The record gives the reactivity of an RNA of 177 nucleotides to 2A3 and DMS. The RNA was probed in 150 mM KOAc, 10 mM MgCl2 and 150 mM bicine (pH 8.5) at 24 C. The 2A3 profile rests on 22,159 reads.

RNA sequence: GGGAACGACUCGAGUAGAGUCGAAAAAGGUGUGAUAUCGUGCUUCCUGGGACGUGUGAUGCUGUGCUUCCUGGGAGGUGUGAUCCCACACUCAAAAGUAUAACCAACAGUUCGCUGUUGGUUAUACCGCUUUUAUAAGGUUCGCCUUAUAAAAGCGAAAAGAAACAACAACAACAAC
Reactivity to 2A3 in 0.01 (KOAc 150mM, MgCl2 10mM, bicine 150mM(pH8.5), 24C), signal-to-noise 7, nucleotides 027 to 126: a000g040g000u020g000u000g010a020u010a000u070c020g010u010g010c000u010u000c000c000u000g010g000g010a010c030g020u030g050u060g110a230u270g130c190u200g040u070g030c010u020u010c000c000u000g010g000g000a000g010g000u010g010u000g000a000u020c000c010c000a000c000a000c000u130c030a070a080a010a010g000u000a000u000a000a000c020c000a000a000c000a000g040u070u100c190g030c130u000g000u000u000g000g000u000u000a000u000a000c000
Reactivity to DMS in 0.01 (KOAc 150mM, MgCl2 10mM, bicine 150mM(pH8.5), 24C), signal-to-noise 5, nucleotides 027 to 126: a110g000g010u000g020u000g010a110u000a010u000c000g030u000g000c000u000u000c000c000u000g000g000g000a030c090g010u000g010u000g010a170u010g020c160u010g020u000g000c020u000u000c000c000u000g010g000g010a010g000g020u000g010u000g000a020u000c050c070c000a030c010a000c010u000c140a060a050a070a130g000u000a010u000a010a010c000c000a010a000c000a020g010u000u020c240g030c000u000g010u000u000g000g000u000u000a000u000a000c000